Structure probing data (DMS and 2A3) for a 177-nucleotide construct. It was measured as part of the RMDB library OK2TST. The 2A3 profile rests on 5,770 reads. 2A3 adducts were read by reverse transcription with SuperScript II with manganese.
RNA sequence: GGGAACGACUCGAGUAGAGUCGAAAAGAAUUAGCCAUUUUCGGCAAGCCAAUGGACCACUUCGAUCGAGUAUUUUCAAGCGAAGCGUCCAAUCUGGAUGUAAUAGACUCUCUGUUACUGGGUAGUCAUGUCUUUCCAUAUUCGUAUGGAAAGACAUAAAAGAAACAACAACAACAAC
Reactivity to DMS in 0.01 (KOAc 150mM, MgCl2 10mM, bicine 150mM(pH8.5), 24C), signal-to-noise 9, nucleotides 027 to 126: g000a140a110u000u010a140g010c020c010a140u000u000u000u000c160g010g000c020a110a130g000c010c020a030a070u000g010g010a030c030c070a140c010u000u000c010g000a060u000c130g000a060g020u010a110u010u000u010u000c020a060a080g000c020g000a010a020g040c300g000u000c010c010a010a070u010c200u000g000g000a080u000g000u000a020a100u010a160g000a060c040u000c050u000c040u010g020u000u000a090c180u010g000g010g010u010a040g010u000c030
Reactivity to 2A3 in 0.01 (KOAc 150mM, MgCl2 10mM, bicine 150mM(pH8.5), 24C), signal-to-noise 5, nucleotides 027 to 126: g040a020a130u160u090a040g000c000c030a070u130u030u100u280c060g020g010c020a030a010g030c000c000a020a020u020g010g000a010c000c020a120c060u020u000c010g060a090u020c060g020a050g070u120a260u160u290u090u070c050a090a000g030c000g010a000a000g000c000g010u000c010c020a000a050u090c110u030g020g030a050u080g050u110a080a060u050a140g020a020c000u010c000u010c030u070g090u190u100a080c080u060g020g000g100u100a030g020u010c030